[RMDB]
RNA sequence: GGGAACGACUCGAGUAGAGUCGAAAAUGAUAAAGAUCUACCAACGAUAAGAUAUCACGGACGUAAGUUUCUAGAUACUAGAGUAGUAUAUUGUCACAUGUCUAAACUUCAAGAGAGAGAUUAUAUGAUUACUAGACGACAGCUAUGUUAUCAUGAACUCAUUUAUCACUUUCGAGUGAUAAAUGAGAAAAGAAACAACAACAACAAC
Reactivity to DMS in 0.01 (KOAc 150mM, MgCl2 10mM, bicine 150mM(pH8.5), 24C), signal-to-noise 3, nucleotides 027 to 156: u000g000a100u000a040a140a130g010a100u000c010u000a300c020c030a070a200c080g040a160u000a100a110g010a150u000a080u010c040a100c090g010g000a090c040g010u010a080a180g010u000u000u000c000u000a100g010a110u010a040c080u010a040g010a210g030u000a050g040u000a050u000a090u000u000g030u000c040a070c070a040u000g020u020c020u010a080a080a120c040u000u000c100a080a130g020a120g020a160g000a060g010a120u010u000a090u010a050u000g040a050u000u000a040c050u000a100g010a120c040g010a070c060a050g020c030u010a070u010g010u000u000a070u000c050a050u010g000a070a210
Reactivity to 2A3 in 0.01 (KOAc 150mM, MgCl2 10mM, bicine 150mM(pH8.5), 24C), signal-to-noise 8, nucleotides 027 to 156: u090g010a010u070a070a090a050g090a050u010c020u040a050c010c030a110a040c060g060a060u080a150a080g030a060u050a030u090c060a050c100g030g020a000c040g070u080a030a120g010u010u030u050c020u030a050g010a060u040a070c030u050a050g020a020g140u050a010g030u010a030u020a040u120u120g050u030c020a020c020a090u080g020u000c020u060a030a140a170c050u090u070c100a120a010g040a000g010a010g000a000g000a110u080u110a110u080a020u130g020a020u020u060a030c010u010a020g030a090c070g030a020c040a020g010c010u030a030u230g020u030u020a030u030c020a020u050g060a030a020